[RMDB]
RNA sequence: GGGAACGACUCGAGUAGAGUCGAAAAUGCUGACAAGUGCGCCGUCGGCACGAGAAGCAGCGAUGGAAUUCGUAAAUGAACGUCUCAAACCUGAAAUCAUGGGGGAUUAUCAGCAGGGCCGUUCAGAGAUCCUUAGCACAUUCGUGUGCUAAGGAUCAAAAGAAACAACAACAACAAC
Reactivity to 2A3 in 0.01 (KOAc 150mM, MgCl2 10mM, bicine 150mM(pH8.5), 24C), signal-to-noise 5, nucleotides 027 to 126: u110g010c000u000g010a060c020a140a120g020u020g020c030g090c070c050g050u080c060g030g000c000a000c020g060a080g040a080a050g070c020a010g020c020g020a030u100g090g130a060a100u050u090c060g020u090a030a020a110u040g000a010a000c000g010u000c000u000c000a110a130a070c010c000u000g010a010a030a000u060c070a150u150g090g010g090g010g090a020u020u040a260u170c010a010g020c030a040g000g010g000c000c000g000u010u000c010a000g010a010
Reactivity to DMS in 0.01 (KOAc 150mM, MgCl2 10mM, bicine 150mM(pH8.5), 24C), signal-to-noise 3, nucleotides 027 to 126: u050g020c020u000g020a110c050a090a110g010u000g040c010g010c000c030g010u000c050g010g020c000a020c040g000a160g000a130a090g010c030a010g000c000g010a130u000g000g010a070a060u020u000c010g000u010a110a140a090u010g000a020a040c030g010u000c000u000c040a020a060a300c300c010u020g000a000a020a010u000c020a040u010g030g000g000g000g000a040u000u000a150u010c000a000g010c130a200g000g010g000c000c010g010u000u020c010a010g010a140